RNA sequence: GGGAACGACUCGAGUAGAGUCGAAAACCUCGCACCGAGUUCCGCUGCGGGUUCGCCUGCAAGAACGCAUGGUGUUGAGGCCCUGUCCGCCGCUGCGCUGCCACCUACUCUUCGCGCCGCUAGUCGAGUAGCUACAUACGUUCGCGUAUGUAGCUACAAAAGAAACAACAACAACAAC
Reactivity to DMS in 0.01 (KOAc 150mM, MgCl2 10mM, bicine 150mM(pH8.5), 24C), signal-to-noise 1, nucleotides 027 to 126: c000c000u000c030g000c000a010c010c010g000a170g000u000u000c010c070g030c040u010g000c000g010g000g020u000u020c160g000c010c020u000g030c000a080a130g010a000a080c030g000c110a200u010g030g010u000g000u000u010g010a030g010g020c060c010c000u000g010u000c050c040g000c060c010g020c070u000g010c070g000c050u000g000c080c030a040c020c030u000a060c050u010c010u000u000c120g010c040g010c050c040g000c080u000a080g010u000c030g000a200